Conditions: 150 mM KOAc, 10 mM MgCl2 and 150 mM bicine (pH 8.5), 24 C. This 177-nucleotide RNA was probed chemically with 2A3 and DMS. The DMS profile rests on 1,781 reads. As a SHAPE reagent, 2A3 marks flexible, mostly unpaired nucleotides at the ribose 2'-OH.
[RMDB]
RNA sequence: GGGAACGACUCGAGUAGAGUCGAAAAGGUGCGCCAUGCAGCUAGAACCAUGACUGGAGAUUACAGCCCCAACAAGAAGGUGUCCCGUAAGGUAGGAUGUUCAGAAUGGGUCUGCUCUGCUCAACAGCGCGUAUCAGUGAUUCGUCACUGAUACGCGAAAAGAAACAACAACAACAAC
Reactivity to 2A3 in 0.01 (KOAc 150mM, MgCl2 10mM, bicine 150mM(pH8.5), 24C), signal-to-noise 3, nucleotides 027 to 126: g080g000u070g020c050g000c060c040a050u110g020c030a010g050c000u090a040g020a080a090c010c000a070u080g040a060c020u020g010g000a020g020a050u060u100a090c000a000g030c000c010c010c000a040a080c030a010a060g090a000a020g070g040u100g000u060c050c030c010g030u020a010a080g070g010u060a030g020g060a020u100g120u110u020c020a000g070a070a010u020g030g030g000u040c000u010g000c040u010c010u030g000c000u010c050a090a100c040a020g050
Reactivity to DMS in 0.01 (KOAc 150mM, MgCl2 10mM, bicine 150mM(pH8.5), 24C), signal-to-noise 2, nucleotides 027 to 126: g000g070u010g000c000g000c090c050a010u090g030c050a070g000c160u030a100g020a190a150c000c000a000u000g000a140c010u000g000g030a060g000a110u000u030a110c080a120g000c070c000c000c060a040a060c160a100a150g040a050a040g000g000u000g000u000c000c010c000g000u010a170a010g000g010u040a050g000g000a000u000g010u000u000c030a000g000a140a180u020g000g010g040u000c030u000g000c040u030c010u000g020c080u000c090a080a100c210a120g080